The record gives the reactivity of an RNA of 177 nucleotides to DMS. For DMS, 608 sequencing reads were counted. Values cover nucleotides 27 to 126.
RNA sequence: GGGAACGACUCGAGUAGAGUCGAAAAUUGUUGACGCGGUUGUUCAACAAACUGGGCACCGAUCUACUCAAUUCGAUGCACAGCAAGAUUUGGAAGACGCUACAGGUGGUCCACGAAUAUUUCCCCAACGAGGAUUUUAGUUCGCUAAAAUCCUCGUAAAAGAAACAACAACAACAAC
Reactivity to DMS in 0.01 (KOAc 150mM, MgCl2 10mM, bicine 150mM(pH8.5), 24C), signal-to-noise 1, nucleotides 027 to 126: u000u000g020u030u000g000a030c160g020c250g020g040u040u000g010u000u000c000a010a010c000a020a070a220c060u000g000g020g000c030a010c060c040g000a040u000c070u010a100c130u010c130a050a200u000u000c000g040a030u000g030c010a000c070a070g000c160a090a100g020a130u000u030u000g020g010a120a120g000a010c070g000c040u010a100c090a100g010g010u000g020g000u000c010c040a040c130g030a070a090u000a150u000u000u000c010c000c000c240a040
Background
The RNA was probed in 150 mM KOAc, 10 mM MgCl2 and 150 mM bicine (pH 8.5) at 24 C.